[RMDB]
RNA sequence: GGGAACGACUCGAGUAGAGUCGAAAAGGGGUCCAUCUCUAGCGUGAGAGCUUGGACCCAUGGCCAAAGCCUGAAGCCUCCACGGGCUUAAGACAGCCAUGGCUAGCUCUUCGGGUGGACGGAGGCACCCAAACUCAAGAGGUUCGCCUCUUGAGAAGAGAUACAUGUGGUUCGCCACAUGUAUCUCAAAAGAAACAACAACAACAAC
Reactivity to 2A3 in 0.01 (KOAc 150mM, MgCl2 10mM, bicine 150mM(pH8.5), 24C), signal-to-noise 5, nucleotides 027 to 156: g070g000g040g020u000c010c000a020u000c060u010c020u090a100g120c090g200u260g090a020g000a000g000c020u150u190g050g040a100c020c000c010a010u010g000g000c020c030a100a060a030g000c000c010u040g050a100a010g020c000c000u000c010c000a020c020g010g020g020c000u050u070a060a050g120a120c220a050g010c010c000a000u010g000g000c010u010a020g020c000u000c000u090u120c060g000g020g000u010g000g020a050c030g000g010a000g000g000c000a050c000c000c000a000a050a090c010u000c000a000a000g010a000g070g030u120u170c240g130c070c000u000c000u000u000g000a010g000a020a020
Reactivity to DMS in 0.01 (KOAc 150mM, MgCl2 10mM, bicine 150mM(pH8.5), 24C), signal-to-noise 1, nucleotides 027 to 156: g020g030g060g030u000c000c010a010u000c020u020c050u010a120g000c220g040u000g030a070g020a000g070c040u000u030g000g020a070c300c000c010a000u000g040g010c000c070a140a110a140g010c000c000u030g000a000a110g000c190c000u000c020c070a300c060g020g000g000c000u000u000a040a080g010a120c130a190g010c000c030a000u010g000g030c000u030a040g030c010u000c010u000u000c020g030g000g030u000g030g010a060c030g000g000a050g050g060c000a110c040c000c000a040a090a250c000u000c000a000a030g030a050g060g040u000u000c300g020c000c000u000c000u000u020g010a000g000a100a170